[RMDB]
RNA sequence: GGGAACGACUCGAGUAGAGUCGAAAACAUGGAGUCUUCGGACUCCAUGCACUACCGAAAUAAUGCCUCGGUAUAAAAGGCAAACCCUUGGAAACAUGGGAACGAUGUCACGAUUCGUCGUGACAAAGAGAGUGAUAGGGUUCGCCCUAUCACUCUCAAAAGAAACAACAACAACAAC
Reactivity to DMS in 0.01 (KOAc 150mM, MgCl2 10mM, bicine 150mM(pH8.5), 24C), signal-to-noise 2, nucleotides 027 to 126: c000a000u000g000g000a020g000u010c000u000u030c210g020g020a040c000u000c000c010a010u000g030c090a230c050u000a030c010c000g020a100a130a120u000a110a080u000g010c020c000u000c000g000g000u000a070u000a010a050a040a040g000g020c020a010a060a190c010c000c000u000u010g000g000a180a030a220c010a000u000g000g020g000a090a080c240g000a130u000g000u000c000a010c000g020a010u000u000c230g030u010c000g020u000g010a000c000a010a030a110
Reactivity to 2A3 in 0.01 (KOAc 150mM, MgCl2 10mM, bicine 150mM(pH8.5), 24C), signal-to-noise 3, nucleotides 027 to 126: c010a000u000g000g000a000g000u000c040u070u080c300g130g010a000c000u000c000c000a000u000g000c000a030c020u030a000c000c010g030a040a070a080u230a060a050u100g000c000c000u010c010g000g000u060a050u140a190a050a010a000g010g000c000a030a070a270c020c010c010u000u010g050g020a070a030a010c020a010u020g000g010g040a020a010c090g140a090u120g000u000c000a000c020g010a030u060u080c170g040u000c000g000u070g050a000c010a000a010a010